An RNA of 177 nucleotides, treated with DMS and 2A3 and read out base by base. For DMS, 11,550 sequencing reads were counted. Source: RMDB library OK2TRN, as collected in RNAgym. Values cover nucleotides 27 to 126.
[RMDB]
RNA sequence: GGGAACGACUCGAGUAGAGUCGAAAAGGCUGUAAUCAGUGUCAGUGGUAUCUGUGAAUUCCUGUGUGUCUUAGGUUAUGAUUGUUAGUGGAGACUCUGGUAAGGAUUUACCGUGGACAGGGAGCCAGAAUGUAAGUACCUUCGGGUACUUACAUUCAAAAGAAACAACAACAACAAC
Reactivity to DMS in 0.01 (KOAc 150mM, MgCl2 10mM, bicine 150mM(pH8.5), 24C), signal-to-noise 5, nucleotides 027 to 126: g010g010c020u000g010u010a090a110u010c050a060g010u000g010u010c040a060g030u000g010g000u000a060u000c040u000g000u000g010a110a140u000u000c030c010u010g020u000g020u000g010u000c020u000u000a090g020g000u000u000a070u010g000a120u000u000g010u000u000a080g020u000g000g000a130g000a070c040u000c040u010g010g000u010a040a060g010g010a110u010u000u000a030c020c090g020u010g010g010a070c040a090g010g010g010a080g020c030c060a130
Reactivity to 2A3 in 0.01 (KOAc 150mM, MgCl2 10mM, bicine 150mM(pH8.5), 24C), signal-to-noise 2, nucleotides 027 to 126: g030g000c030u020g050u130a070a100u070c020a050g000u010g030u060c020a040g010u010g090g000u070a110u140c050u060g060u010g140a080a210u110u040c000c000u040g060u000g000u000g020u080c010u020u150a120g000g100u090u110a070u110g050a160u090u190g100u110u130a070g010u040g040g080a040g010a050c030u000c030u050g000g060u050a030a030g010g020a040u030u000u100a060c020c030g080u020g000g000a000c030a090g000g050g040a020g010c020c010a020